An RNA of 177 nucleotides, treated with DMS and 2A3 and read out base by base. In probing experiments dimethyl sulfate is read out at A N1 and C N3, which are open when not base-paired. For 2A3 the reverse transcriptase was SuperScript II with manganese. Source: RMDB library OK2TRN, as collected in RNAgym. The DMS profile rests on 2,239 reads.
[RMDB]
RNA sequence: GGGAACGACUCGAGUAGAGUCGAAAAUAUCCGGACUCCUGGCGUAGCCAACCGGGUGUGGCUUGCCGGCCGUGUCUUCCGGCAGUAUUGGAAGCGCGUUACAGAGAGGGGACAGCGUGACCGGGCCUAGUGUCACGUGAUUCGUCACGUGACACUAAAAAGAAACAACAACAACAAC
Reactivity to DMS in 0.01 (KOAc 150mM, MgCl2 10mM, bicine 150mM(pH8.5), 24C), signal-to-noise 2, nucleotides 027 to 126: u000a090u000c050c000g000g000a150c050u010c050c020u000g000g000c030g020u010a050g020c020c010a090a080c070c150g010g030g030u000g060u000g010g010c050u000u000g010c030c020g010g000c210c020g020u000g010u000c020u000u010c020c030g010g000c140a130g000u010a100u030u010g020g000a040a080g010c040g000c020g000u020u000a100c160a110g000a120g000a120g010g030g010g020a070c080a090g000c050g010u010g010a130c020c010g030g010g010c040c090
Reactivity to 2A3 in 0.01 (KOAc 150mM, MgCl2 10mM, bicine 150mM(pH8.5), 24C), signal-to-noise 2, nucleotides 027 to 126: u120a030u000c000c000g030g060a080c040u060c080c060u050g050g020c030g140u100a010g000c030c030a070a100c060c080g090g090g020u180g020u000g040g000c010u010u030g000c000c000g000g010c020c020g060u050g000u020c020u070u000c000c060g060g000c100a100g110u120a130u120u250g040g050a050a040g030c010g020c000g010u040u020a100c080a100g080a000g010a030g060g030g000g030a020c030a020g010c040g000u060g020a050c000c020g000g020g040c000c000